[RMDB]
RNA sequence: GGGAACGACUCGAGUAGAGUCGAAAACUUGAGGAUAGAGUCAAGGAGUCUCGAGCUGGGCUUGCCAACAUCAAUGAAGUCUCUAUCAGCGGUGAACUUCAUAUAAAAGACAACCGACCCUCCAGCAGGCAACGUGGUGCCACUGGGCCCAGGGUACCUAGACCAGACUUUUCGAAGUCUGGUCUAGAAAAGAAACAACAACAACAAC
Reactivity to 2A3 in 0.01 (KOAc 150mM, MgCl2 10mM, bicine 150mM(pH8.5), 24C), signal-to-noise 1, nucleotides 027 to 156: c000u000u030g010a010g000g050a080u100a170g100a020g030u070c040a020a020g080g000a020g060u010c000u040c170g080a040g030c030u060g000g020g010c020u110u120g060c020c040a020a110c020a110u150c030a030a080u090g030a070a000g010u000c000u000c000u040a090u140c030a020g050c050g080g000u030g050a030a030c010u030u010c020a000u170a000u040a140a140a000a000g030a030c010a050a080c020c060g000a010c040c010c030u010c030c000a000g070c020a040g020g030c010a020a030c050g080u100g030g100u010g060c000c020a030c020u000g000g030g000c000c050c020a000g000g000g000u000a020c000